[RMDB]
RNA sequence: GGGAACGACUCGAGUAGAGUCGAAAACAAAACUGACCACCUAUGAGGUCAUACAUCGUCAUAGCAAAACAAAACAAAACUGACCAGUUAUGAGGUCAUACAUCGUCAUAUCAAACAAAACAACAAAGCGGGUAUGAGUAUUCGUACUCAUACCCGCAAAAGAAACAACAACAACAAC
Reactivity to 2A3 in 0.01 (KOAc 150mM, MgCl2 10mM, bicine 150mM(pH8.5), 24C), signal-to-noise 2, nucleotides 027 to 126: c040a090a060a000a110c050u070g010a030c000c000a000c050c000u040a040u080g100a120g030g000u020c040a000u120a060c050a180u250c150g090u000c000a000u030a030g060c030a000a000a000a110c030a020a170a010a050c110a010a230a030a020c070u020g000a000c000c000a000g010u020u000a000u000g010a120g010g000u000c000a000u160a040c020a010u190c300g090u050c000a000u000a000u060c000a000a000a170c020a020a050a030a050c060a000a070c050a270a090a000